[RMDB]
RNA sequence: GGGAACGACUCGAGUAGAGUCGAAAAAUACAAGGGGAGGUUUCGGCCAAAUGUUGUAUGCAGAAAGCGUGAGGUAGGUAGCACUUAGACACUCACGAGUAGCGGUUCGGCAGUAGUGCUAAAAUGAGACAGUACGAAAAGUUCGCUUUUCGUACAAGUUACUACAGCGGUUCGCCGCUGUAGUAACAAAAGAAACAACAACAACAAC
Reactivity to DMS in 0.01 (KOAc 150mM, MgCl2 10mM, bicine 150mM(pH8.5), 24C), signal-to-noise 2, nucleotides 027 to 156: a110u000a090c020a090a130g020g000g030g020a050g040g020u000u000u000c020g010g000c040c020a040a020a080u010g020u000u000g000u000a090u010g000c060a060g010a040a080a070g010c050g030u030g020a060g020g000u000a090g020g000u000a130g010c030a090c060u020u000a110g000a030c010a070c020u010c040a040c010g010a120g100u000a070g010c000g000g040u000u000c080g020g000c050a060g010u000a040g030u000g020c010u000a060a040a050a150u000g020a080g000a090c050a080g010u000a010c000g000a030a010a010a040g000u000u000c300g010c030u000u000u010u000c010g010u020a000c020a020a080
Reactivity to 2A3 in 0.01 (KOAc 150mM, MgCl2 10mM, bicine 150mM(pH8.5), 24C), signal-to-noise 4, nucleotides 027 to 156: a000u210a030c060a060a040g030g020g010g000a030g010g050u000u070u160c080g020g000c040c030a040a030a080u090g020u030u020g030u040a090u100g020c040a000g100a090a100a010g050c020g010u030g000a030g000g030u070a050g040g030u030a010g020c020a020c040u040u050a030g030a080c030a000c080u020c000a030c050g000a030g010u070a020g020c070g040g040u060u040c040g020g020c010a010g020u090a010g020u010g030c010u040a020a020a030a070u060g000a020g010a100c070a070g010u010a000c000g000a000a000a000a000g010u020u060c130g050c130u000u000u000u000c000g020u000a000c000a000a000
Description
This 207-nucleotide RNA was probed chemically with DMS and 2A3. Conditions: 150 mM KOAc, 10 mM MgCl2 and 150 mM bicine (pH 8.5), 24 C.